RNA sequence: GGGAACGACUCGAGUAGAGUCGAAAAGAUAUGGACUCCCGGUGGGAGCUGUGGUCGGAAACGACCAAACAGCGAAGAACACCGGAGUCCUAAGUCAAAGGAGGCACUAGUUCGCUAGUGCCUCCAAGGACCACUAAUAGUUCGCUAUUAGUGGUCCAAAAGAAACAACAACAACAAC
Reactivity to 2A3 in 0.01 (KOAc 150mM, MgCl2 10mM, bicine 150mM(pH8.5), 24C), signal-to-noise 1, nucleotides 027 to 126: g010a020u050a020u090g000g000a000c020u090c090c060c000g000g030u010g010g070g060a140g080c000u010g020u010g030g000u000c010g060g000a050a050a010c000g000a000c020c000a020a130a000c000a020g030c020g080a290a040g090a140a000c010a000c020c010g000g000a010g000u000c000c000u000a010a010g000u000c020a000a070a130g030g010a000g000g000c000a020c000u000a000g020u150u140c300g080c210u000a000g010u010g000c000c000u020c010c000a000a000
Reactivity to DMS in 0.01 (KOAc 150mM, MgCl2 10mM, bicine 150mM(pH8.5), 24C), signal-to-noise 2, nucleotides 027 to 126: g010a010u000a120u000g000g000a010c010u000c170c070c140g030g020u000g030g000g050a110g030c010u000g020u000g000g000u000c010g010g000a060a040a070c000g010a020c000c000a010a080a120c020a000g020c000g010a200a190g010a260a220c000a000c010c010g020g010a020g000u000c000c000u010a000a030g010u000c010a080a160a180g000g020a000g000g010c000a020c000u000a000g000u000u020c270g000c010u000a010g000u000g000c000c000u000c020c000a000a040

Conditions: 150 mM KOAc, 10 mM MgCl2 and 150 mM bicine (pH 8.5), 24 C. The record gives the reactivity of an RNA of 177 nucleotides to 2A3 and DMS.